Chemical mapping of a 207-nucleotide RNA with 2A3 and DMS.
For 2A3 the reverse transcriptase was SuperScript II with manganese.

RNA sequence: GGGAACGACUCGAGUAGAGUCGAAAAGCCGUAAACGCAUCCGGCGAAUAAGAUGCAUGAGCGAAAGCUCUAAGAUAAUUGGCCGUUUUGUAGGGGCCGUAGAGCCUACUUAUUAAUGCUCGAGAUGUGUGGAGCGAUCAUCACGCAAGACUAACAAACCUGCGGAUAUAUUCGUAUAUCCGCAGGUAAAAGAAACAACAACAACAAC
Reactivity to 2A3 in 0.01 (KOAc 150mM, MgCl2 10mM, bicine 150mM(pH8.5), 24C), signal-to-noise 1, nucleotides 027 to 156: g050c000c000g040u050a000a000a020c000g000c000a000u000c000c000g000g000c080g000a010a030u180a010a000g070a070u090g040c050a070u070g080a000g080c030g100a160a000a000g000c000u000c000u010a070a020g070a090u110a020a000u120u070g010g000c000c020g110u070u020u100u150g070u070a030g070g010g010g000c000c000g000u000a000g000a000g030c000c000u010a030c030u080u000a000u000u060a100a220u180g000c120u090c060g110a200g000a030u010g050u000g010u100g070g030a090g060c070g050a070u180c040a050u000c000a100c070g050c000a000a110g150a120c020u150a110a040c060a070a160
Reactivity to DMS in 0.01 (KOAc 150mM, MgCl2 10mM, bicine 150mM(pH8.5), 24C), signal-to-noise 1, nucleotides 027 to 156: g010c010c020g020u010a050a170a080c030g030c000a050u000c070c050g000g050c050g060a020a060u000a060a100g060a180u010g000c060a170u010g020a110g020c000g040a180a020a090g000c000u000c010u010a110a130g010a120u000a050a150u000u050g040g060c000c000g000u020u000u020u000g040u040a170g000g000g060g010c020c000g000u000a010g010a080g010c010c080u000a050c020u000u000a060u000u000a080a010u000g050c000u000c040g040a230g040a050u000g000u000g020u000g010g010a200g080c010g000a040u010c060a120u000c010a080c050g000c000a020a040g020a300c010u000a040a070c050a050a140

The reactions ran in a buffer of 150 mM KOAc, 10 mM MgCl2 and 150 mM bicine (pH 8.5), at 24 C. For DMS, 1,254 sequencing reads were counted.